RNA sequence: GGGAACGACUCGAGUAGAGUCGAAAAGAAACAACGAGAAUUGCACAAAUGGUAACCAGAGUUUCACAAAUCUCCAGCAUAACGGCAGCUUCAACAAUAGAUGGCUUUAGUAGUGAAUCAACACAAAUCAUAAUAAUGGGUUCGCCCAUUAUUAUGAAAAAGAAACAACAACAACAAC
Reactivity to DMS in 0.01 (KOAc 150mM, MgCl2 10mM, bicine 150mM(pH8.5), 24C), signal-to-noise 9, nucleotides 027 to 126: g010a090a060a060c060a040a080c070g010a120g010a110a110u010u010g020c070a060c080a060a080a060u000g010g010u000a050a050c050c030a050g000a140g010u000u010u000c060a070c110a050a080a070u010c040u010c020c060a060g010c070a060u010a060a080c130g000g010c050a040g010c030u000u000c040a040a060c090a050a060u000a060g010a060u000g010g000c030u000u000u000a060g030u000a040g020u000g010a070a060u010c100a040a040c080a050c130a050a060a100
Reactivity to 2A3 in 0.01 (KOAc 150mM, MgCl2 10mM, bicine 150mM(pH8.5), 24C), signal-to-noise 6, nucleotides 027 to 126: g030a010a040a000c020a010a000c040g040a010g060a140a170u110u110g010c040a030c020a090a140a100u110g040g010u040a030a010c000c000a010g020a020g080u020u050u050c060a040c030a020a100a060u040c030u000c020c010a010g010c020a070u040a120a020c020g030g000c020a010g020c010u070u060c030a070a080c010a060a040u040a100g090a090u060g030g010c020u050u070u090a050g030u020a020g020u040g070a050a060u100c050a080a050c020a010c010a040a050a090